[RMDB]
RNA sequence: GGGAACGACUCGAGUAGAGUCGAAAAGAAAGAGAUUAAUACCACGAUUUAAUUAUUCGAAUAAAUAGUAGAAUAUUUUUACCUUGAAGUAACAAGGUACUCAAGAGCCUUGAGCCAGAGUGGAAAAUAUCUUCGGUACAUUCGUGUACCGAAGAUAAAAAGAAACAACAACAACAAC
Reactivity to DMS in 0.01 (KOAc 150mM, MgCl2 10mM, bicine 150mM(pH8.5), 24C), signal-to-noise 2, nucleotides 027 to 126: g010a080a060a160g010a100g000a090u010u010a100a160u000a170c030c030a020c030g000a130u000u000u020a040a060u020u050a020u000u010c020g000a190a120u030a200a050a080u030a050g000u000a180g020a000a000u000a010u000u000u000u000u010a030c010c000u000u000g000a100a070g020u040a080a110c000a000a010g000g000u000a010c030u000c060a030a030g010a240g010c200c100u000u010g000a080g000c030c040a060g000a120g020u000g000g000a060a050a040a090
Reactivity to 2A3 in 0.01 (KOAc 150mM, MgCl2 10mM, bicine 150mM(pH8.5), 24C), signal-to-noise 3, nucleotides 027 to 126: g080a000a080a020g110a010g030a010u080u170a130a120u080a140c000c000a010c020g020a010u060u100u250a060a030u060u020a010u000u020c000g000a030a010u230a220a160a090u070a060g020u010a010g000a030a010u020a040u050u060u010u020u010a000c000c000u020u000g030a160a030g130u060a090a030c000a000a000g020g000u000a010c010u030c010a070a050g060a040g160c020c060u050u050g010a010g010c030c030a020g040a020g060u040g000g000a090a020a040a090